RNA sequence: GGGAACGACUCGAGUAGAGUCGAAAAGUCGUAGACCCCAUGGAACCGCAGCCAGAUGACAAACAGCAGGGCUGCGUAACCUAAGGUGAGGAGGUGGUGACCGAGGAUGUUCCCCAGUUUGGCCGCGCGUAGUAGCAUAGUUCGCUAUGCUACUACGAAAAGAAACAACAACAACAAC
Reactivity to DMS in 0.01 (KOAc 150mM, MgCl2 10mM, bicine 150mM(pH8.5), 24C), signal-to-noise 9, nucleotides 027 to 126: g010u000c030g010u010a100g020a090c030c010c000c050a130u020g000g010a060a230c300c010g000c010a000g010c000c010a100g010a140u020g010a120c220a090a120a120c160a060g010c110a100g000g000g010c000u010g000c000g000u000a010a210c020c010u010a190a130g000g010u010g010a120g000g000a050g010g010u000g000g010u010g000a070c040c010g000a060g010g010a090u010g000u000u010c000c000c000c080a080g000u000u000u000g010g010c040c020g010c120g010
Reactivity to 2A3 in 0.01 (KOAc 150mM, MgCl2 10mM, bicine 150mM(pH8.5), 24C), signal-to-noise 9, nucleotides 027 to 126: g030u010c010g000u020a030g080a190c000c010c010c010a050u090g010g010a010a050c050c000g000c010a010g010c010c010a100g050a240u090g040a110c100a110a270a030c030a070g140c030a050g030g020g010c000u000g000c000g000u010a010a010c000c010u030a070a040g030g020u060g040a070g020g040a040g020g060u070g010g020u050g030a040c010c010g000a020g040g020a070u090g020u020u020c000c000c000c000a040g010u040u090u080g040g000c020c010g020c020g000